This 177-nucleotide RNA was probed chemically with 2A3 and DMS. The reactions ran in a buffer of 150 mM KOAc, 10 mM MgCl2 and 150 mM bicine (pH 8.5), at 24 C.
[RMDB]
RNA sequence: GGGAACGACUCGAGUAGAGUCGAAAAAAAGGGGGUAUAUGCUGUUCGUCAGAAAGUGAAUGAAAACCCACUGUACUCCACUACUUCUGAGCACGUCAACGUAUUGCUUACUAGGACCGAAGAUCGACCCUACGUAACAGUUCGCUGUUACGUAGGGAAAAGAAACAACAACAACAAC
Reactivity to 2A3 in 0.01 (KOAc 150mM, MgCl2 10mM, bicine 150mM(pH8.5), 24C), signal-to-noise 2, nucleotides 027 to 126: a000a000a010g190g020g010g000g000u040a090u030a020u080g040c000u000g030u030u050c040g090u060c030a010g070a090a130a010g030u040g020a020a050u030g010a080a070a060a060c020c000c010a010c020u010g000u020a030c010u030c030c030a030c000u120a030c020u030u070c030u070g020a000g040c020a020c070g060u040c050a100a090c030g060u090a120u070u150g040c000u030u040a090c010u070a080g050g000a020c000c030g000a030a010g070a070u070c000g050a080
Reactivity to DMS in 0.01 (KOAc 150mM, MgCl2 10mM, bicine 150mM(pH8.5), 24C), signal-to-noise 3, nucleotides 027 to 126: a020a050a080g020g000g000g010g030u000a050u000a060u010g020c080u000g000u000u000c040g020u010c070a040g020a090a090a090g040u000g010a100a070u000g000a070a070a090a070c100c030c030a080c060u000g000u000a100c030u000c010c050a070c030u000a070c100u000u000c070u000g020a050g000c090a040c080g020u000c080a080a100c180g000u000a110u020u000g000c050u000u000a050c080u000a070g000g010a150c030c030g000a040a070g000a140u000c080g010a170
For 2A3 the reverse transcriptase was SuperScript II with manganese.
For DMS the reverse transcriptase was MarathonRT.